An RNA of 177 nucleotides, treated with DMS and 2A3 and read out base by base. For DMS, 1,744 sequencing reads were counted. 2A3 adducts were read by reverse transcription with SuperScript II with manganese. Conditions: 150 mM KOAc, 10 mM MgCl2 and 150 mM bicine (pH 8.5), 24 C.
RNA sequence: GGGAACGACUCGAGUAGAGUCGAAAAGAUAUGGAUACGCGAGGAGCUUGGACCCAUGACGUCGGAAACGACGUAUGGCUAGCUCCUCAUCCUAAGUCAAAGAUGGUACCGUUCGCGGUACCAUCAACAGGUAGUGACAGUUCGCUGUCACUACCUGAAAAGAAACAACAACAACAAC
Reactivity to DMS in 0.01 (KOAc 150mM, MgCl2 10mM, bicine 150mM(pH8.5), 24C), signal-to-noise 3, nucleotides 027 to 126: g030a040u000a300u020g000g010a040u000a120c300g040c300g030a020g020g000a020g010c020u020u000g030g020a120c300c000c010a030u010g000a020c000g020u000c010g010g000a050a080a170c000g020a000c000g000u000a000u000g000g010c060u000a040g020c000u000c010c000u000c010a000u000c000c010u000a070a170g010u000c050a090a070a160g000a010u000g000g000u000a000c010c000g010u000u010c150g000c000g000g020u000a000c000c000a000u000c000a030a130
Reactivity to 2A3 in 0.01 (KOAc 150mM, MgCl2 10mM, bicine 150mM(pH8.5), 24C), signal-to-noise 3, nucleotides 027 to 126: g010a000u110a030u220g020g000a040u080a190c210g100c210g300a020g020g000a010g000c050u070u150g160g120a210c060c060c000a020u050g300a080c020g020u020c000g030g050a050a030a050c000g000a000c000g000u010a000u000g000g030c020u030a010g000c030u010c010c000u000c010a000u000c000c020u000a070a050g020u000c050a140a070a110g010a000u000g000g030u010a000c010c010g010u050u090c300g040c030g170g000u000a000c000c000a000u000c010a010a020